[RMDB]
RNA sequence: GGGAACGACUCGAGUAGAGUCGAAAACUGGGCAUGGUGGUGCAUGCCUGUAAUUCCAGCGGCUUGGAAGGCUGAGGCAGGAGAAUCACUUGAACUUGGGAGGUGGAGGUUGCAGUGAGCCAAGAUCACACCACUGCAUUCCAGCCUGGGCACUAGACUACAAGCGAAUGUUCGCAUUCGCUUGUAGAAAAGAAACAACAACAACAAC
Reactivity to 2A3 in 0.01 (KOAc 150mM, MgCl2 10mM, bicine 150mM(pH8.5), 24C), signal-to-noise 1, nucleotides 027 to 156: c020u060g000g020g030c020a050u050g040g080u000g010g000u010g040c030a000u080g030c020c000u000g000u050a080a100u030u000c020c000a000g080c020g040g040c030u000u260g060g000a030a040g080g000c060u060g030a030g040g040c070a090g000g000a020g060a120a000u140c030a030c170u070u170g060a140a060c010u060u070g010g080g000a060g000g000u010g010g010a020g070g020u010u020g000c020a000g000u010g040a040g020c050c040a100a070g080a190u200c020a000c010a010c110c010a030c000u010g000c010a040u130u050c030c000a010g030c020c000u020g000g060g000c000a060c030u020a030g000a060